[RMDB]
The data come from the RNA Mapping Database (RMDB), library M2RFPK. An RNA of 207 nucleotides, treated with DMS and 2A3 and read out base by base.
RNA sequence: GGGAACGACUCGAGUAGAGUCGAAAAGAGAGGGUAACCACCGGCGCGCGUCACUGAUAUAUCCACCGGGGGGUAAGGUGAGAAAAGGAUACAGCGCGACGAAGUUAGCACGCUGCCCCGUAAGGCUUGAAGAGUGUAGUGUUCGCACUACACUCAACUUCUGUUAACGUUUCGACGUUAACAGAAGAAAAGAAACAACAACAACAAC
Reactivity to DMS in 0.01 (KOAc 150mM, MgCl2 10mM, bicine 150mM(pH8.5), 24C), signal-to-noise 1, nucleotides 027 to 156: g000a090g010a090g000g010g000u020a080a080c020c050a090c070c000g000g000c020g010c030g020c050g000u000c070a200c010u000g020a120u020a130u010a160u000c030c010a060c030c020g000g040g010g010g060g060u000a080a090g050g010u000g010a100g030a100a040a130a090g030g000a150u000a110c020a090g000c010g000c020g020a050c010g020a090a090g010u010u000a050g000c030a050c030g010c030u020g050c000c010c010c010g000u010a090a090g010g000c080u000u010g010a120a160g000a000g040u010g000u000a010g060u010g050u000u000c200g000c010a000c000u000a010c000a010c000u000c000a020a060
Reactivity to 2A3 in 0.01 (KOAc 150mM, MgCl2 10mM, bicine 150mM(pH8.5), 24C), signal-to-noise 3, nucleotides 027 to 156: g090a000g030a030g000g010g050u040a040a040c020c020a050c030c030g000g000c020g010c000g000c000g050u070c020a030c110u020g060a060u070a020u040a040u190c000c030a020c030c070g010g000g000g000g000g060u090a090a030g040g010u000g020a120g030a030a090a040a010g010g000a010u040a080c060a040g010c010g000c000g010a000c010g000a040a020g040u080u080a030g030c060a020c110g050c030u050g030c000c010c000c010g000u040a030a040g040g040c050u090u130g070a150a090g000a060g000u000g000u000a000g000u010g020u040u050c190g020c030a000c000u000a000c000a000c000u000c000a000a000
2A3 adducts were read by reverse transcription with SuperScript II with manganese. Reactivities are rounded to 0.1 and cut off at 0 and 3. Reactivities are given for positions 27 through 156.